[RMDB]
RNA sequence: GGGAACGACUCGAGUAGAGUCGAAAAUUCUCACCUAAACCCAAGAAUCACUGUUUCUUAUAGCGGUGGUUUAAACAGAGGUGCAAACAGCAAGUGAAUCUCGUCGCCUUUGCGGGGCUGUGGCCAUCAGGCAUCUUUAUUUCGAUAAAGAUGCCUGAAAAGAAACAACAACAACAAC
Reactivity to 2A3 in 0.01 (KOAc 150mM, MgCl2 10mM, bicine 150mM(pH8.5), 24C), signal-to-noise 7, nucleotides 027 to 126: u030u000c010u000c010a030c000c030u080a080a090a070c010c000c010a060a020g040a030a000u020c000a020c020u010g040u040u080u040c210u160u200a160u280a150g000c010g010g000u020g000g020u000u000u050a080a070a020c030a000g040a020g030g030u040g030c030a030a100a090c020a040g070c050a120a060g060u120g180a150a110u060c020u040c070g100u050c020g030c020c010u080u070u050g030c030g010g000g030g000c010u020g010u060g080g020c030c000a040u000
Reactivity to DMS in 0.01 (KOAc 150mM, MgCl2 10mM, bicine 150mM(pH8.5), 24C), signal-to-noise 2, nucleotides 027 to 126: u040u000c000u000c000a160c140c130u040a050a010a090c040c000c030a140a110g000a030a000u010c000a020c000u000g000u000u000u000c160u080u020a050u020a020g020c000g030g000u000g000g000u040u000u000a070a100a180c090a070g000a070g000g000u000g010c150a040a090a030c130a040g050c050a110a080g000u000g080a060a060u000c040u000c010g050u010c010g000c040c010u000u020u000g050c020g030g000g000g000c000u000g010u000g000g020c130c130a110u000